Source: RMDB library OK3TST, as collected in RNAgym. An RNA of 207 nucleotides, treated with 2A3 and DMS and read out base by base. The reactions ran in a buffer of 150 mM KOAc, 10 mM MgCl2 and 150 mM bicine (pH 8.5), at 24 C. For DMS, 3,964 sequencing reads were counted.
[RMDB]
RNA sequence: GGGAACGACUCGAGUAGAGUCGAAAAUUGUCUGUCUUCUUGUCAACAGAUCAAUUAAUGAUAAGUGUAAAAAAAAGGUUAUUUGGGGUCUAGUGCAUGAAGGACUCUAGUGCAUGAAGGACAAGAAUGCGAUGGAUGUGUAGGUCAAGAGAUUGGGUGAGAGAAUCAGUUUCGACUGAUUCUCUCAAAAAGAAACAACAACAACAAC
Reactivity to 2A3 in 0.01 (KOAc 150mM, MgCl2 10mM, bicine 150mM(pH8.5), 24C), signal-to-noise 3, nucleotides 027 to 156: u050u030g010u010c010u000g010u030c010u100u020c000u060u090g030u040c020a010a000c000a070g020a060u110c050a020a060u070u140a060a090u130g050a070u070a140a110g040u060g030u190a080a070a000a000a000a010a050a100g030g020u090u030a110u100u080u060g030g020g000g010u030c030u030a020g010u010g050c020a030u030g040a070a080g020g020a080c010u000c020u080a020g000u030g020c010a000u040g050a070a020g060g000a000c000a000a000g030a040a020u050g040c070g020a010u050g010g020a030u020g000u010g020u070a020g000g060u040c030a040a020g070a020g010a090u090u180g030g000g030
Reactivity to DMS in 0.01 (KOAc 150mM, MgCl2 10mM, bicine 150mM(pH8.5), 24C), signal-to-noise 2, nucleotides 027 to 156: u000u000g030u020c000u000g010u000c010u000u000c060u000u000g020u000c020a160a050c080a040g000a070u000c020a040a090u000u000a090a090u000g000a140u000a080a100g020u000g000u000a010a000a000a050a070a060a130a220g000g010u000u000a080u000u000u000g010g000g020g020u000c030u010a090g020u000g010c010a060u000g020a140a090g020g000a110c030u000c030u000a250g010u000g030c010a040u000g000a060a030g010g000a060c030a050a080g000a050a060u000g010c000g010a130u000g040g020a050u000g040u000g010u010a030g030g000u000c040a060a120g000a090g000a090u010u000g020g030g020